[RMDB]
RNA sequence: GGGAACGACUCGAGUAGAGUCGAAAAAGUAGGCUUGUCGUUCGUUAUGUUUUUGUAAAUGGCCUCGUCAAACGGUGGAGAGAGUCGCUAGGUGAUCGUCAGAUCUGCCUAGUCUCUAUACAGCGUGUUUAAUUGACAUGGGUUGAUGCGUAUUGAGCCUAAUGGAAGACUUCGGUCUUCCAUUAGGAAAAGAAACAACAACAACAAC
Reactivity to DMS in 0.01 (KOAc 150mM, MgCl2 10mM, bicine 150mM(pH8.5), 24C), signal-to-noise 2, nucleotides 027 to 156: a190g020u000a080g010g020c020u000u010g030u010c010g040u000u000c050g030u010u040a110u020g020u000u010u000u030u040g030u010a040a050a100u020g000g010c000c040u000c250g030u000c030a030a040a060c020g020g040u000g000g020a130g010a110g020a060g010u000c230g040c000u000a000g020g040u000g000a020u000c000g020u020c300a140g030a020u000c000u000g090c000c000u000a000g000u000c020u000c030u000a090u000a100c060a050g010c020g060u010g030u040u000u000a080a170u000u000g020a020c030a130u000g020g010g020u000u010g010a080u000g000c010g000u000a300u000u000g000a200g000
Reactivity to 2A3 in 0.01 (KOAc 150mM, MgCl2 10mM, bicine 150mM(pH8.5), 24C), signal-to-noise 5, nucleotides 027 to 156: a000g150u080a000g000g020c020u010u010g000u030c000g000u020u020c020g030u030u040a180u140g090u090u100u020u130u130g160u080a090a110a060u060g030g000c000c030u070c080g010u000c000a040a050a040c010g090g080u010g020g020a080g000a000g000a000g040u100c070g000c020u000a000g020g000u010g000a000u000c000g150u110c120a050g000a010u010c030u040g070c000c000u000a000g010u000c000u000c000u000a040u010a020c020a040g040c010g010u020g040u050u120u060a110a090u060u090g030a020c070a100u140g000g000g030u030u020g040a060u060g020c060g020u080a080u070u110g050a040g060
Chemical mapping of a 207-nucleotide RNA with DMS and 2A3. For DMS the reverse transcriptase was MarathonRT. The reactions ran in a buffer of 150 mM KOAc, 10 mM MgCl2 and 150 mM bicine (pH 8.5), at 24 C. 2A3 adducts were read by reverse transcription with SuperScript II with manganese.